[RMDB]
Structure probing data (2A3 and DMS) for a 207-nucleotide construct. The data come from the RNA Mapping Database (RMDB), library RNAMAK. For DMS, 3,264 sequencing reads were counted. Conditions: 150 mM KOAc, 10 mM MgCl2 and 150 mM bicine (pH 8.5), 24 C.
RNA sequence: GGGAACGACUCGAGUAGAGUCGAAAAGGGGUCAAGACGACAUGCUUGUAGUAGAGUGUGAGCUCUUAAGACAUGUAAGCACUGAAGCCUCCACGGUGCUUACAACAGCUUAAGUGAAGGACGGGUACAAGCAACAGCGUCUUGACGGAGGCACCCAGUAAUAAAUCUACUUCGGUAGAUUUAUUACAAAAGAAACAACAACAACAAC
Reactivity to 2A3 in 0.01 (KOAc 150mM, MgCl2 10mM, bicine 150mM(pH8.5), 24C), signal-to-noise 4, nucleotides 027 to 156: g160g010g050g000u000c000a000a000g000a000c020g020a070c030a090u070g000c010u020u020g010u040a110g050u060a040g100a130g090u280g080u150g090a030g030c000u000c000u010u010a010a010g020a070c020a020u030g000u000a000a000g000c000a000c000u010g020a090a020g020c000c010u000c000c000a000c000g000g000u000g010c000u000u000a000c000a020a020c010a020g080c000u000u010a000a000g000u020g070a090a060g150g120a070c040g030g000g030u010a000c000a010a010g000c010a050a050c040a090g030c000g000u000c000u000u000g000a000c010g000g000a000g000g000c000a010c010c000c000a000
Reactivity to DMS in 0.01 (KOAc 150mM, MgCl2 10mM, bicine 150mM(pH8.5), 24C), signal-to-noise 2, nucleotides 027 to 156: g000g000g040g030u010c000a020a000g010a030c030g040a080c040a300u000g000c010u000u020g010u000a020g020u030a140g020a090g000u010g010u000g030a300g020c030u000c000u010u010a030a030g000a070c040a300u000g010u010a000a000g000c000a010c000u000g000a040a110g020c000c000u000c010c010a300c030g000g020u000g020c000u000u000a010c040a030a060c130a150g010c000u000u010a020a070g020u000g010a060a040g000g010a150c050g030g000g000u020a050c040a020a060g020c020a040a080c020a150g030c000g000u000c010u000u000g010a020c000g050g000a010g030g020c040a110c000c000c030a250